About this RNA
This 177-nucleotide RNA was probed chemically with DMS and 2A3. It was measured as part of the RMDB library M2PK90. Reactivities are rounded to 0.1 and cut off at 0 and 3. Conditions: 150 mM KOAc, 10 mM MgCl2 and 150 mM bicine (pH 8.5), 24 C. For 2A3 the reverse transcriptase was SuperScript II with manganese.

RNA sequence: GGGAACGACUCGAGUAGAGUCGAAAAACAAAGAGCAACACGCGCAGUCACGCAGGCAGAUGGAAUAAUCUGCCAAGAAUAACUAAUGGACGGUAGACUGCGCGAACCACCGUCCAAUAGAAAAAAAACAUCUAAUUGGUUUCGACCAAUUAGAUGUAAAAGAAACAACAACAACAAC
Reactivity to DMS in 0.01 (KOAc 150mM, MgCl2 10mM, bicine 150mM(pH8.5), 24C), signal-to-noise 2, nucleotides 027 to 126: a080c060a050a060a060g020a100g020c050a040a020c090a280c000g000c000g000c000a020g000u000c000a230c300g020c270a120g000g060c000a000g020a000u000g010g000a150a060u010a110a080u000c000u000g000c000c000a060a040g010a110a100u000a070a130c080u000a040a060u000g000g010a000c000g030g000u000a150g020a000c000u010g000c010g000c010g010a010a040c180c150a020c000c010g000u000c000c000a010a010u000a010g000a010a000a020a040a030a070a220
Reactivity to 2A3 in 0.01 (KOAc 150mM, MgCl2 10mM, bicine 150mM(pH8.5), 24C), signal-to-noise 3, nucleotides 027 to 126: a020c090a020a120a010g110a020g060c030a010a050c010a000c040g020c000g000c000a000g000u000c000a010c090g090c080a100g000g000c010a000g000a010u020g020g050a170a010u110a120a080u090c010u000g000c000c010a000a000g020a020a060u210a110a020c020u030a010a050u030g000g010a000c000g000g020u020a050g020a000c000u000g000c000g000c000g000a000a000c020c010a020c000c000g000u010c000c000a000a020u040a020g090a120a020a000a020a000a000a000